[RMDB]
RNA sequence: GGGAACGACUCGAGUAGAGUCGAAAAAGGGCUUGUCAACUGUGUAAUGUUUGUGGUGGGCAUCCCAGAGCUGUUGGUGAUCAGCAGGCUUGUACGUCCUCUAUGUUUCACGGUCGACGGUGUGUCGUUACUGAUUGUGAGGGGUGUCCUCUGGAUCAUAUGAGCAGAUAUUCGUAUCUGCUCAUAUAAAAGAAACAACAACAACAAC
Reactivity to DMS in 0.01 (KOAc 150mM, MgCl2 10mM, bicine 150mM(pH8.5), 24C), signal-to-noise 1, nucleotides 027 to 156: a070g000g020g020c020u010u010g020u000c040a080a100c020u000g010u010g020u000a070a120u010g020u010u000u010g000u000g000g010u020g000g000g040c020a060u000c010c010c000a150g000a140g000c010u000g000u000u000g020g000u010g000a050u010c070a060g030c030a080g010g040c020u000u010g010u000a070c040g010u000c020c020u020c020u000a070u020g010u010u000u000c030a080c040g010g020u000c000g010a070c030g040g030u000g020u000g020u000c040g020u000u000a050c040u000g020a040u000u010g040u000g000a280g020g000g030g030u010g020u000c020c020u020c030u010g010g000a160u000c090
Reactivity to 2A3 in 0.01 (KOAc 150mM, MgCl2 10mM, bicine 150mM(pH8.5), 24C), signal-to-noise 4, nucleotides 027 to 156: a000g050g010g000c050u050u070g020u060c020a030a040c090u030g010u010g020u150a050a210u060g080u040u100u060g060u050g020g030u020g000g000g010c010a010u010c020c000c000a010g050a000g050c030u040g020u020u030g020g030u070g030a080u100c030a010g050c030a010g050g020c030u050u200g050u060a110c000g010u030c020c010u050c040u120a130u160g100u020u140u130c070a060c030g020g020u020c000g010a010c010g000g050u120g030u050g010u090c050g030u040u050a070c030u050g010a040u090u050g040u060g100a050g010g020g010g020u020g030u000c020c000u010c000u010g010g040a050u090c010